[RMDB]
RNA sequence: GGGAACGACUCGAGUAGAGUCGAAAACUGGGUUGGUGAAGUAGAUUUAAGGUGGAAGGGCUGUGGAGGCCCAAGCAAGGCCGGAACACAUCCCUGCCUUGGUCUCAGGUGUCAAGCACAGUCCCCCACCUAGCACACUUUUCGAAGUGUGCUAGGUAAAAGAAACAACAACAACAAC
Reactivity to DMS in 0.01 (KOAc 150mM, MgCl2 10mM, bicine 150mM(pH8.5), 24C), signal-to-noise 3, nucleotides 027 to 126: c040u000g000g000g050u000u000g020g010u000g000a050a090g000u010a070g000a080u000u000u020a050a040g010g040u010g010g000a140a080g010g000g000c100u000g010u000g020g010a300g020g000c020c000c030a060a040g020c130a080a080g010g010c000c150g010g000a110a170c140a070c200a050u000c060c000c000u010g000c000c010u000u010g000g010u000c020u000c110a150g010g010u010g010u000c010a050a090g060c060a040c010a050g000u010c020c010c010c050c050
Reactivity to 2A3 in 0.01 (KOAc 150mM, MgCl2 10mM, bicine 150mM(pH8.5), 24C), signal-to-noise 1, nucleotides 027 to 126: c010u010g000g040g120u040u010g070g000u080g050a080a040g050u180a060g040a030u010u090u300a120a000g040g020u080g050g140a090a100g020g000g000c010u010g000u010g050g020a060g030g000c000c010c040a000a000g150c020a030a030g000g000c000c000g040g090a110a010c120a010c000a080u050c010c000c000u000g010c000c000u000u020g000g000u000c000u030c060a040g040g170u110g020u110c020a030a070g040c050a070c000a130g000u020c000c000c000c000c000
The record gives the reactivity of an RNA of 177 nucleotides to DMS and 2A3.